[RMDB]
RNA sequence: GGGAACGACUCGAGUAGAGUCGAAAACGGUUCACUACGGUGAACCGAGGCGUGACGUUCGCGUCACGCCAAGUAGUUCGUGAGAACUACAACCUGCUUCGUGAGAAGCAGGAAGGAAGGCUCUACGGAGCCUUCCAGAGAGGCUACGGCCUCUCACAUAGACGCUACGGCGUCUAUGAUUAGCUCGCCAGUUAGCGAGGUCUGUCUCGACACGACAGAUAAUCGGGUGCAACUCCCGCCCCUCUUCCGAGGGUCAUCGGAACCAUAGGUUGCGCUUCGGCGCAACCAAAAGAAACAACAACAACAAC
Reactivity to 2A3 in 0.01 (KOAc 150mM, MgCl2 10mM, bicine 150mM(pH8.5), 24C), signal-to-noise 2, nucleotides 027 to 266: c010g000g000u010u000c000a000c010u020a030c280g080g000u000g010a000a000c000c000g010a030g000g000c010g020u000g000a010c000g020u050u090c300g010c020g110u000c010a000c000g000c000c010a000a030g000u010a000g000u000u020c020g020u040g090a090g000a030a000c000u000a010c010a000a040c000c000u000g000c000u000u000c000g040u030g030a110g000a010a000g000c000a000g000g000a000a010g010g000a000a000g000g000c010u000c010u020a050c300g050g000a000g010c010c000u010u010c000c000a000g000a000g000a000g000g010c040u070a010c250g110g000c000c000u030c020u000c000a000c000a000u000a000g010a000c000g000c000u050a030c260g170g010c000g000u000c000u000a000u000g000a000u010u070a010g020c000u030c000g020c030c030a220g250u210u110a010g030c000g010a010g010g000u000c010u010g010u000c020u020c120g170a110c050a060c240g020a000c000a010g010a010u020a020a090u060c000g010g000g010u010g020c000a010a000c010u010c010c000c000g000c010c000c000c000u160c120u010u000c000c000g000a000g000g000g040u010c010a010u000c000g000g000a010a010c020c010a130u190a110

An RNA of 307 nucleotides, treated with 2A3 and read out base by base. The RNA was probed in 150 mM KOAc, 10 mM MgCl2 and 150 mM bicine (pH 8.5) at 24 C.